Source information:
Source: RMDB library OK2TST, as collected in RNAgym. The record gives the reactivity of an RNA of 177 nucleotides to DMS. For DMS, 2,134 sequencing reads were counted. DMS adducts were read by reverse transcription with MarathonRT. Values cover nucleotides 27 to 126.
RNA sequence: GGGAACGACUCGAGUAGAGUCGAAAAGAGGGUCAGGUUUUCAUACCCUCCUGUCAAUCAGCCAUUGAAUGUGGGUUGCCCCAAAAGGGUGUGUGACCUUGGGUGCGGCUGCUCUCUGCAGCAGAGGAUUUACACACCCCUUCGGGGGUGUGUAAAUAAAAGAAACAACAACAACAAC
Reactivity to DMS in 0.01 (KOAc 150mM, MgCl2 10mM, bicine 150mM(pH8.5), 24C), signal-to-noise 2, nucleotides 027 to 126: g030a070g000g000g000u010c110a070g020g010u000u010u020u000c030a090u000a030c020c000c000u010c000c040u000g010u010c070a040a070u010c050a150g000c010c020a100u000u010g020a120a140u010g000u000g010g000g000u000u010g010c030c040c020c110a040a050a070a110g010g000g030u000g030u000g010u010g010a080c040c030u010u010g020g020g030u000g030c150g010g000c030u000g000c010u010c170u000c200u020g000c070a030g010c020a060g000a090g010g000